[RMDB]
RNA sequence: GGGAACGACUCGAGUAGAGUCGAAAAGUAGUGCUCGACAGGGAGGCUGUCUCGCAGAGCUUUUAGAUCUUCUGAUCUUUCCCUCCUCCAUAUCGCUUAUGCGUCAAGCGAUAGACGCAUAAUUAAAGUGUUGAACAGAUUUCGAUCUGUUCAACACAAAAGAAACAACAACAACAAC
Reactivity to DMS in 0.01 (KOAc 150mM, MgCl2 10mM, bicine 150mM(pH8.5), 24C), signal-to-noise 2, nucleotides 027 to 126: g030u000a090g030u000g010c010u000c160g000a040c020a030g000g010g030a080g030g050c050u000g010u000c010u000c210g000c030a010g010a300g010c000u000u010u010u000a020g000a000u000c000u010u020c280u030g020a000u000c000u000u000u000c010c000c000u000c000c000u000c010c040a070u020a060u000c040g020c190u000u000a010u000g000c010g010u010c000a120a150g010c250g010a090u010a030g000a010c010g010c000a000u000a010a020u010u000a020a090a080
Reactivity to 2A3 in 0.01 (KOAc 150mM, MgCl2 10mM, bicine 150mM(pH8.5), 24C), signal-to-noise 2, nucleotides 027 to 126: g010u080a020g160u020g050c020u020c040g020a000c000a010g090g150g070a080g300g120c000u000g010u000c000u020c040g000c000a050g030a090g150c000u010u000u010u010a020g000a000u000c010u290u080c140u300g010a010u000c000u000u000u000c010c000c020u020c000c000u000c010c000a080u070a050u090c060g000c050u010u000a000u020g000c000g000u000c020a000a090g180c030g270a070u070a040g010a000c010g020c020a000u020a010a000u060u180a070a060a010